Structure probing data (2A3 and DMS) for a 177-nucleotide construct. The reactions ran in a buffer of 150 mM KOAc, 10 mM MgCl2 and 150 mM bicine (pH 8.5), at 24 C. Source: RMDB library OK1LIB, as collected in RNAgym. For 2A3, 211,380 sequencing reads were counted. For DMS, 119,736 sequencing reads were counted.
[RMDB]
RNA sequence: GGGAACGACUCGAGUAGAGUCGAAAACAGCUACACGAGACCGAGACGGAUUGCUUGCUGUUCAGGUUUGCUUAUCAGCAGAGAUGGCCGUGUUGGAUUUUAGUCUUUGUGUGGUGAGCGAAGCUGGGUGGAUUGCGUCGUUCGCGAUGUAAUUCACAAAAGAAACAACAACAACAAC
Reactivity to 2A3 in 0.01 (KOAc 150mM, MgCl2 10mM, bicine 150mM(pH8.5), 24C), signal-to-noise 9, nucleotides 027 to 126: c010a010g020c020u070a010c030a010c060g060a030g060a090c030c030g040a050g050a070c070g050g030a080u040u130g050c070u030u050g000c000u010g010u050u040c020a040g040g080u040u090u110g040c000u010u010a010u020c000a000g000c000a000g010a010g010a120u080g090g010c010c010g090u150g220u220u270g040g040a120u090u070u070u290a050g010u000c000u010u020u070g010u010g020u020g010g010u030g010a010g010c020g020a030a010g040c020u050g060g070
Reactivity to DMS in 0.01 (KOAc 150mM, MgCl2 10mM, bicine 150mM(pH8.5), 24C), signal-to-noise 9, nucleotides 027 to 126: c060a110g010c020u000a030c050a060c030g000a040g010a090c030c020g000a110g010a120c050g000g000a120u010u010g010c110u010u000g010c010u000g010u000u010c040a030g000g010u010u010u010g000c010u000u000a030u000c020a100g000c000a020g010a030g000a040u010g000g020c000c020g000u030g010u040u030g000g000a130u020u020u020u030a160g010u000c010u000u000u010g010u000g020u010g010g010u000g000a030g010c030g000a030a030g000c010u000g000g000